Notes:
Structure probing data (DMS and 2A3) for a 177-nucleotide construct. For DMS the reverse transcriptase was MarathonRT. Source: RMDB libraries RFM100 and RFMREP, as collected in RNAgym.
RNA sequence: GGGAACGACUCGAGUAGAGUCGAAAAUCCUUGCUCUGCGAUGGCCGUCAAACAUACACUUGAGAAUUCUGUGUGAGGGUACUGUAGCAUCGGGUUACUGUACACCAAUCCAGACGAUUCUCAGGUGAUACGAUUACUAUUUCGAUAGUAAUCGUAUAAAAGAAACAACAACAACAAC
Reactivity to DMS in 0.01 (KOAc 150mM, MgCl2 10mM, bicine 150mM(pH8.5), 24C), signal-to-noise 9, nucleotides 027 to 126: u010c010c000u000u010g010c060u000c020u000g010c050g010a070u010g000g010c030c040g010u010c090a080a080a080c160a100u020a300c010a000c000u000u010g000a020g000a020a010u000u000c010u000g000u030g010u000g000a300g000g000g010u000a000c000u000g000u000a010g010c010a300u020c200g020g020g020u000u000a010c000u000g000u000a010c000a120c010c000a010a240u000c010c000a010g000a070c300g000a070u000u000c000u000c000a010g000g010u000g000
Reactivity to 2A3 in 0.01 (KOAc 150mM, MgCl2 10mM, bicine 150mM(pH8.5), 24C), signal-to-noise 9, nucleotides 027 to 126: u010c000c000u000u040g030c020u020c020u060g020c030g050a060u060g050g000c020c010g050u070c040a050a070a060c030a040u250a040c000a000c010u000u000g000a000g010a010a020u210u000c010u000g250u020g010u010g160a030g010g000g000u000a000c000u040g000u010a010g040c020a080u230c170g300g050g000u010u000a000c000u010g000u030a000c260a190c020c000a000a010u000c000c000a010g010a050c050g080a020u000u000c000u000c000a000g010g000u000g000